[RMDB]
RNA sequence: GGGAACGACUCGAGUAGAGUCGAAAAUAAUCGCGCGAAAAUCGCGUGAAAUAAUCAGAGGAAUCGUUUGAAAUCAUCGUAGUAAUCGCGCGAAAAUCGCGUGAAAUACUAUGGUAGACGGUUUGAGCCAAAAACAUCUGUUCGCAGAUGUUUUUGGAAAAGAAACAACAACAACAAC
Reactivity to 2A3 in 0.01 (KOAc 150mM, MgCl2 10mM, bicine 150mM(pH8.5), 24C), signal-to-noise 6, nucleotides 027 to 126: u120a010a090u040c020g000c000g000c020g090a110a070a030a250u250c010g000c000g000u000g000a020a000a000u170a040a040u160c080a020g020a040g100g100a010a030u010c010g030u020u070u130g180a150a100a020u100c030a000u030c010g000u000a010g000u010a050a020u010c000g000c010g010c010g030a060a060a010a070u190c010g000c000g000u000g000a000a030a000u020a000c000u000a010u010g020g000u000a010g010a020c010g010g050u000u030u060g060a020g010
Reactivity to DMS in 0.01 (KOAc 150mM, MgCl2 10mM, bicine 150mM(pH8.5), 24C), signal-to-noise 4, nucleotides 027 to 126: u040a080a120u000c000g000c010g040c000g000a130a110a170a150u010c020g020c010g030u000g000a010a080a120u010a080a090u030c110a180g010a100g040g000a040a010u000c000g010u010u020u030g020a060a090a100u010c130a040u020c010g040u000a000g010u000a020a250u000c020g010c010g020c000g000a110a100a110a160u010c020g020c000g010u000g000a000a050a050u000a000c010u000a010u000g000g000u000a060g010a010c050g000g000u010u000u000g000a110g000
This 177-nucleotide RNA was probed chemically with 2A3 and DMS. DMS (dimethyl sulfate) methylates the pairing face of unpaired adenines and cytosines. It was measured as part of the RMDB libraries RFM100 and RFMREP. DMS adducts were read by reverse transcription with MarathonRT.